Background
An RNA of 177 nucleotides, treated with DMS and 2A3 and read out base by base. 2A3 adducts were read by reverse transcription with SuperScript II with manganese. Conditions: 150 mM KOAc, 10 mM MgCl2 and 150 mM bicine (pH 8.5), 24 C.
[RMDB]
RNA sequence: GGGAACGACUCGAGUAGAGUCGAAAAUCUAAAGGGCAUUCUUGUAAUAAGUUGAACUUUAAUUUCAAAUAAAAGGCUCAAAAGGCUCAGAACACCCAAGGGGCCAACCGUAUAAUAUUACCGGUUGCGUCCGGUAAUCUUUCGAGAUUACCGGACGAAAAGAAACAACAACAACAAC
Reactivity to DMS in 0.01 (KOAc 150mM, MgCl2 10mM, bicine 150mM(pH8.5), 24C), signal-to-noise 2, nucleotides 027 to 126: u010c130u000a020a060a020g000g000g000c010a020u000u000c020u000u000g000u020a110a070u050a030a060g000u040u000g030a010a040c020u000u010u000a020a030u010u000u000c050a100a100a130u100a070a050a090a120g010g000c000u000c040a010a050a090a290g010g010c050u010c030a060g000a020a070c200a130c140c000c030a120a130g000g020g000g070c150c000a000a020c000c000g000u000a050u000a140a110u020a110u000u000a040c160c010g000g000u000u000g010
Reactivity to 2A3 in 0.01 (KOAc 150mM, MgCl2 10mM, bicine 150mM(pH8.5), 24C), signal-to-noise 2, nucleotides 027 to 126: u030c010u030a080a000a060g000g030g090c010a070u160u090c040u070u060g190u300a200a160u070a300a000g030u020u020g080a030a030c000u000u020u090a050a060u010u070u050c020a070a020a020u250a110a070a010a060g050g000c010u020c020a000a000a000a140g020g000c000u030c050a110g040a140a050c040a080c030c030c020a060a080g020g000g010g000c000c000a000a000c000c000g030u010a000u090a210a180u240a180u160u120a070c100c010g000g030u010u010g050